[RMDB]
RNA sequence: GGGAACGACUCGAGUAGAGUCGAAAAUAAGUACCACUCACGGGUAGCAAGAAAGAAACUAAUGCUGCCGGCAAUUAUGCAAUUAACAUCGAAAAACGGCGUACUUUCGCUAUCAAAAUGCAAAAUCAGCCAGUGCAGUAUUCGUACUGCACUGGCUAAAAGAAACAACAACAACAAC
Reactivity to 2A3 in 0.01 (KOAc 150mM, MgCl2 10mM, bicine 150mM(pH8.5), 24C), signal-to-noise 1, nucleotides 027 to 126: u260a000a000g090u000a000c000c000a010c050u000c000a100c000g260g000g000u000a000g000c120a150a000g040a000a220a000g190a230a000a090c070u060a110a000u000g000c000u000g000c000c070g000g000c020a120a180u230u160a150u200g000c000a000a000u220u300a240a000c050a060u300c060g260a060a100a060a050a060c000g000g000c000g000u000a060c000u000u070u240c090g110c080u000a000u220c030a000a150a000a000u300g040c140a160a160a000a000u150c050
An RNA of 177 nucleotides, treated with 2A3 and read out base by base. The RNA was probed in 150 mM KOAc, 10 mM MgCl2 and 150 mM bicine (pH 8.5) at 24 C.